[RMDB]
RNA sequence: GGGAACGACUCGAGUAGAGUCGAAAAUAAUAACCAUCCUAAUGAUGUGGUUUGAUUGUCUCAGAGUAGGAGUGAUCUUAAGCUAUUGGGUAAAAGGGCUAAUGAGUGUCAGAAAGAGUAGCCAUUAUUAAUGACAUAAUAUCAAUACUUUUAUUGGCGUAGGAUACAUAUUCGUAUGUAUCCUACGAAAAGAAACAACAACAACAAC
Reactivity to 2A3 in 0.01 (KOAc 150mM, MgCl2 10mM, bicine 150mM(pH8.5), 24C), signal-to-noise 9, nucleotides 027 to 156: u070a000a030u070a020a020c020c000a040u070c010c030u100a140a060u140g080a070u090g030u060g060g030u070u060u090g070a090u040u060g060u040c040u030c090a050g020a030g040u060a030g010g040a020g010u070g030a060u030c020u050u080a050a020g000c010u040a070u120u120g020g000g010u030a040a070a070a070g060g000g010c020u020a030a030u070g040a020g050u040g040u060c040a020g090a070a070a000g050a030g020u060a020g030c010c010a020u040u060a050u060u090a150a090u070g020a020c010a030u180a100a060u110a090u120c020a010a080u100a200c060u100u140u160u170a090u070u080g030g000
Reactivity to DMS in 0.01 (KOAc 150mM, MgCl2 10mM, bicine 150mM(pH8.5), 24C), signal-to-noise 4, nucleotides 027 to 156: u000a090a140u000a070a130c030c040a100u000c040c060u000a100a090u010g010a090u000g030u000g020g000u010u000u010g000a120u000u000g020u000c020u000c050a130g020a110g030u010a060g020g020a070g050u010g010a080u000c060u010u010a090a160g020c050u000a070u000u000g030g020g030u000a030a080a050a050g010g010g020c030u000a070a050u000g010a080g020u000g010u000c040a070g010a060a070a110g020a140g020u000a110g020c020c010a050u000u000a100u000u000a040a080u000g010a050c030a070u000a050a080u000a110u000c040a070a110u000a070c090u010u000u000u000a130u020u020g000g010